[RMDB]
RNA sequence: GGGAACGACUCGAGUAGAGUCGAAAACGGUGCGACUUCGGUCGCACCGAAAACGCGGUGCAGUAAAUGGUCUGCACUAAGGGCUGAAUGGAGCCGCACGGAAAAUGGGCCAUGUUCGCAUGGCCCAGUACAGAAGUGAGUUCGCUCACUUCUGUACAAAAGAAACAACAACAACAAC
Reactivity to DMS in 0.01 (KOAc 150mM, MgCl2 10mM, bicine 150mM(pH8.5), 24C), signal-to-noise 2, nucleotides 027 to 126: c070g020g040u000g030c010g020a010c000u000u030c160g020g020u010c000g000c020a020c010c000g000a020a010a070a140c110g020c140g000g000u000g000c010a010g010u000a040a080a120u000g010g000u000c000u010g000c000a000c000u030a040a050g010g010g030c010u020g000a110a120u010g020g000a020g000c020c020g020c140a090c110g000g010a060a040a070a170u000g000g000g010c000c000a010u000g020u020u020c220g000c000a000u000g000g000c000c000c000a000
Reactivity to 2A3 in 0.01 (KOAc 150mM, MgCl2 10mM, bicine 150mM(pH8.5), 24C), signal-to-noise 2, nucleotides 027 to 126: c020g010g000u020g000c020g030a040c040u040u080c230g040g000u030c050g030c000a010c000c000g010a000a010a010a010c070g000c080g000g000u010g000c010a000g010u090a080a130a270u200g090g040u010c000u020g040c000a000c020u010a010a030g070g000g000c000u000g100a260a120u170g080g150a050g000c020c020g020c040a030c040g080g110a040a100a070a140u120g000g000g000c010c010a000u000g000u010u080c150g030c120a000u000g000g000c000c000c000a000